Structure probing data (2A3 and DMS) for a 177-nucleotide construct. The DMS profile rests on 796 reads. For 2A3 the reverse transcriptase was SuperScript II with manganese.
RNA sequence: GGGAACGACUCGAGUAGAGUCGAAAACAGACCGAAACCUCGGCGUCGGUGGCCGACAACGCCGAUGCGAUCUUCCGCGCCAUGACGAAGAUCAGUACCGCAACGGAUUACGAGGCUGACGGCGUCGCCAGGGCCGGUAAUUCGUUACCGGCCCUGGAAAAGAAACAACAACAACAAC
Reactivity to 2A3 in 0.01 (KOAc 150mM, MgCl2 10mM, bicine 150mM(pH8.5), 24C), signal-to-noise 2, nucleotides 027 to 126: c040a010g190a070c000c060g100a120a050a050c050c010u040c020g000g000c010g010u000c000g000g060u030g020g000c000c040g090a080c050a070a050c130g100c040c010g010a010u040g000c070g000a010u000c010u000u000c060c050g060c010g020c090c110a250u280g030a100c040g000a010a010g000a020u000c010a010g130u110a110c030c100g020c040a010a030c030g020g000a020u110u070a040c080g030a010g020g040c020u000g020a010c000g000g020c000g000u000c010g000
Reactivity to DMS in 0.01 (KOAc 150mM, MgCl2 10mM, bicine 150mM(pH8.5), 24C), signal-to-noise 1, nucleotides 027 to 126: c070a090g000a200c120c080g030a100a060a110c090c020u020c020g010g000c000g020u000c010g010g000u000g000g000c020c060g030a160c090a120a060c080g000c180c000g010a040u000g020c000g000a000u000c010u000u020c070c040g030c200g040c160c170a080u000g010a170c100g000a000a010g000a020u000c010a130g010u020a030c110c030g000c050a060a070c040g000g000a110u010u000a060c050g010a300g000g000c000u000g010a050c070g000g000c020g040u000c020g010